[RMDB]
RNA sequence: GGGAACGACUCGAGUAGAGUCGAAAACUAUUAAUUCGCUGGGUAUGCCAUUCGCGUAGUUGAGCUUACUGAAGCGCGCACGGUAAGCAAUGAUGCUACACGAAGGCGGAUACCUGUGCUGAAGCGCGCACGGCAACCGAAAGGUGCGGUACGAUGGGACAAUUUAGAUCUUCGGAUCUAAAUUGUCAAAAGAAACAACAACAACAAC
Reactivity to 2A3 in 0.01 (KOAc 150mM, MgCl2 10mM, bicine 150mM(pH8.5), 24C), signal-to-noise 5, nucleotides 027 to 156: c030u030a060u250u230a150a150u150u090c010g010c010u030g000g000g010u020a030u060g110c080c100a300u050u000c010g000c010g020u010a010g000u000u010g020a000g000c000u010u000a000c010u010g060a170a050g000c010g000c000g000c030a020c010g000g000u000a000a000g000c000a070a180u030g010a010u030g010c000u000a000c020a000c010g020a020a020g040g000c000g000g000a010u010a010c000c000u000g020u010g000c000u020g030a120a050g000c000g000c000g000c010a010c020g010g010c000a020a010c010c010g090a110a070a070g040g000u010g010c000g050g030u110a070c110g110a110u200g070g090
Reactivity to DMS in 0.01 (KOAc 150mM, MgCl2 10mM, bicine 150mM(pH8.5), 24C), signal-to-noise 2, nucleotides 027 to 156: c050u020a120u000u000a110a070u020u000c050g030c060u010g000g010g010u000a030u000g020c050c000a300u000u000c000g020c000g040u000a020g010u000u000g000a080g020c010u000u000a010c000u000g020a020a060g000c030g040c030g020c050a300c020g010g000u000a010a010g020c000a200a210u000g000a120u010g020c000u000a020c000a040c000g020a020a070g010g000c090g000g010a080u000a050c010c010u020g040u000g010c000u000g020a090a040g050c010g040c020g000c010a300c050g010g030c030a080a100c010c010g000a110a140a170g010g010u000g010c000g000g010u000a080c040g010a140u020g000g000

The record gives the reactivity of an RNA of 207 nucleotides to 2A3 and DMS. For 2A3 the reverse transcriptase was SuperScript II with manganese. The reactions ran in a buffer of 150 mM KOAc, 10 mM MgCl2 and 150 mM bicine (pH 8.5), at 24 C. As a SHAPE reagent, 2A3 marks flexible, mostly unpaired nucleotides at the ribose 2'-OH. The DMS profile rests on 3,289 reads. The data come from the RNA Mapping Database (RMDB), library RNAMAK.